[RMDB]
RNA sequence: GGGAACGACUCGAGUAGAGUCGAAAAUAAAUUAUAAAAGCUGAGAUGAGCUCAGCAAGGGUAUAUUUCGAUGGCGAAAGCCUCGUUCCCUAUCCCUUGCUCCGGAAACGGUAGCUUUUACACAUAAUCAUAGCAUUACUUUCGAGUAAUGCUAUGAAAAAGAAACAACAACAACAAC
Reactivity to 2A3 in 0.01 (KOAc 150mM, MgCl2 10mM, bicine 150mM(pH8.5), 24C), signal-to-noise 2, nucleotides 027 to 126: u020a000a020a020u240u160a100u080a150a030a010a010g000c010u020g000a000g020a190u180g100a090g220c020u010c030a000g020c000a010a000g040g010g000u120a020u010a020u060u020u020c010g010a020u070g000g020c010g060a050a010a030g000c010c010u000c000g000u000u000c000c010c010u000a040u020c000c000c000u000u000g010c000u000c000c010g060g000a080a040a060c010g010g000u020a010g010c000u020u020u030u090a070c130a020c010a050u290a160a080
Reactivity to DMS in 0.01 (KOAc 150mM, MgCl2 10mM, bicine 150mM(pH8.5), 24C), signal-to-noise 3, nucleotides 027 to 126: u010a080a060a070u020u000a140u010a000a020a020a050g010c010u000g000a030g010a300u010g020a220g000c020u000c020a010g010c000a010a000g000g000g020u010a090u000a040u010u000u000c010g010a050u000g020g020c000g010a130a090a090g000c000c000u000c000g000u000u000c000c000c010u010a250u000c010c000c000u000u000g000c000u000c010c010g010g000a080a080a120c020g000g000u020a020g010c010u000u000u000u010a040c160a080c200a100u010a060a130
This 177-nucleotide RNA was probed chemically with 2A3 and DMS. For 2A3, 2,117 sequencing reads were counted. The DMS profile rests on 2,326 reads. The reactions ran in a buffer of 150 mM KOAc, 10 mM MgCl2 and 150 mM bicine (pH 8.5), at 24 C.